[RMDB]
RNA sequence: GGGAACGACUCGAGUAGAGUCGAAAAGAUAUGGAUGUAGAGAACGCACUUUGGUCGAAGAACGUUUUUUUGCAUCGGAAACGAUGCAAAAAAACGGGAGACCUUUGUGCGACUACAUCCUAAGUCAGUAUAGAACAUCCUUCGGGAUGUUCUAUACAAAAGAAACAACAACAACAAC
Reactivity to DMS in 0.01 (KOAc 150mM, MgCl2 10mM, bicine 150mM(pH8.5), 24C), signal-to-noise 1, nucleotides 027 to 126: g020a060u000a300u020g000g030a040u000g020u010a000g020a210g000a250a160c040g030c030a000c020u000u000u000g020g020u010c010g060a190a150g000a160a260c030g010u000u000u000u060u000u000u000g000c000a000u000c000g010g000a130a080a290c000g010a020u000g040c000a000a000a000a000a000a000a000c000g000g020g000a130g010a020c000c000u010u000u010g010u000g030c000g000a060c000u000a000c010a030u000c000c000u000a000a060g010u010c090a170
Source information
Source: RMDB library TTRINS, as collected in RNAgym. Chemical mapping of a 177-nucleotide RNA with DMS. Conditions: 150 mM KOAc, 10 mM MgCl2 and 150 mM bicine (pH 8.5), 24 C.